This 177-nucleotide RNA was probed chemically with DMS and 2A3. Values cover nucleotides 27 to 126. It was measured as part of the RMDB library M2PK50. The DMS profile rests on 2,080 reads. The RNA was probed in 150 mM KOAc, 10 mM MgCl2 and 150 mM bicine (pH 8.5) at 24 C. For 2A3, 927 sequencing reads were counted.
[RMDB]
RNA sequence: GGGAACGACUCGAGUAGAGUCGAAAAUCGUGCCCGUUCGCGGGCACGAGUCACCUACACCGCUUCCAGUCUGGGCCACAACCUCUCUAUGAGAUCUCAGUAUAUUUGGUCAGUUCGCUGACCAAAAUUCAGCAAAAACAUUCGUGUUUUUGCUGAAAAAAGAAACAACAACAACAAC
Reactivity to DMS in 0.01 (KOAc 150mM, MgCl2 10mM, bicine 150mM(pH8.5), 24C), signal-to-noise 2, nucleotides 027 to 126: u010c020g040u010g020c000c000c000g050u000u010c190g030c010g010g000g020c000a000c000g000a000g010u010c090a090c010c000u010a060c070a130c050c080g000c030u010u010c030c010a100g010u000c030u000g010g000g000c030c030a060c100a050a100c040c020u000c020u000c050u000a090u020g000a090g020a060u000c010u000c030a090g000u000a100u010a130u000u000u000g010g000u000c000a000g000u000u010c240g020c010u000g020a010c000c000a000a000a020a140
Reactivity to 2A3 in 0.01 (KOAc 150mM, MgCl2 10mM, bicine 150mM(pH8.5), 24C), signal-to-noise 1, nucleotides 027 to 126: u000c000g030u000g000c000c000c070g050u050u030c220g000c000g050g000g010c000a010c000g000a010g000u040c000a050c020c000u060a030c040a020c020c000g040c020u100u050c010c010a050g050u000c010u030g020g050g060c040c020a090c010a020a090c000c000u030c010u040c010u080a130u210g020a020g010a040u060c050u040c050a020g070u100a120u030a080u300u070u020g030g010u000c010a000g000u010u090c160g050c170u000g000a000c000c000a000a000a000a000